Structure probing data (DMS and 2A3) for a 177-nucleotide construct. Reactivities are given for positions 27 through 126. DMS adducts were read by reverse transcription with MarathonRT.
[RMDB]
RNA sequence: GGGAACGACUCGAGUAGAGUCGAAAAGAUAUGGAUUCAGCUUUUGACGAGCAAGUAUUCGGAAACGAAUACGGGGCUCGAUAAGCUGAUCCUAAGUCAAAGCUACGAUGGUUCGCCAUCGUAGCAACGUGUAGAUUUGGUUCGCCAAAUCUACACGAAAAGAAACAACAACAACAAC
Reactivity to DMS in 0.01 (KOAc 150mM, MgCl2 10mM, bicine 150mM(pH8.5), 24C), signal-to-noise 3, nucleotides 027 to 126: g010a050u000a300u010g000g000a000u000u010c000a000g010c010u010u000u010u010g010a170c090g000a020g030c000a140a170g010u000a000u010u000c000g010g000a120a100a170c000g020a020a020u000a000c000g020g010g020g000c000u000c000g020a060u000a010a010g020c000u000g020a010u000c000c000u000a040a050g010u010c040a050a110a100g000c000u000a000c000g010a020u000g000g000u000u020c300g000c000c000a000u000c000g020u000a010g010c010a020a010
Reactivity to 2A3 in 0.01 (KOAc 150mM, MgCl2 10mM, bicine 150mM(pH8.5), 24C), signal-to-noise 3, nucleotides 027 to 126: g010a030u060a040u180g010g000a010u260u170c030a010g000c020u110u120u130u230g300a190c040g000a000g000c040a100a040g000u000a000u000u000c000g020g030a070a040a080c010g000a000a000u000a000c010g030g030g100g020c000u010c000g020a010u010a020a000g000c000u000g000a000u000c000c000u020a120a030g010u000c040a090a080a080g000c010u000a010c010g000a000u010g000g090u030u120c280g070c110c010a000u010c000g000u000a000g000c000a000a000